An RNA of 177 nucleotides, treated with DMS and 2A3 and read out base by base. Values cover nucleotides 27 to 126. For DMS the reverse transcriptase was MarathonRT. Source: RMDB library OK1LIB, as collected in RNAgym.
[RMDB]
RNA sequence: GGGAACGACUCGAGUAGAGUCGAAAAUGUGGCCCUGCGACCAGGCGAUGCCCAUGCUCACACUAAUCUGGGGGCCAUACUGCAUCUGCUGGGACGCACGAAUCACGCGGCAGCUAGCUAUAAGGCGCCUAGCGAUCACUUUCGAGUGAUCGCUAGGAAAAGAAACAACAACAACAAC
Reactivity to DMS in 0.01 (KOAc 150mM, MgCl2 10mM, bicine 150mM(pH8.5), 24C), signal-to-noise 2, nucleotides 027 to 126: u010g020u020g030g000c100c010c060u010g000c000g000a170c010c050a020g000g000c070g010a000u000g000c010c240c180a100u020g000c000u000c100a010c020a090c070u040a150a080u030c220u000g000g000g040g000g000c030c140a010u000a060c040u020g000c000a060u000c000u020g000c000u000g000g000g000a210c040g030c000a070c170g000a030a050u010c090a170c060g000c070g050g000c090a030g050c000u040a100g000c020u000a030u000a110a230g000g000c000g000
Reactivity to 2A3 in 0.01 (KOAc 150mM, MgCl2 10mM, bicine 150mM(pH8.5), 24C), signal-to-noise 4, nucleotides 027 to 126: u150g010u040g040g020c010c020c020u020g030c020g030a030c020c020a010g100g090c020g040a010u060g010c030c030c000a030u080g010c000u050c010a040c000a010c030u130a010a200u180c090u060g030g000g000g000g000c020c000a000u060a040c070u070g000c000a040u020c000u110g020c000u010g020g000g100a140c000g000c020a000c050g060a030a100u110c020a020c070g030c020g030g000c000a040g010c020u080a000g000c040u050a040u030a300a040g080g000c000g040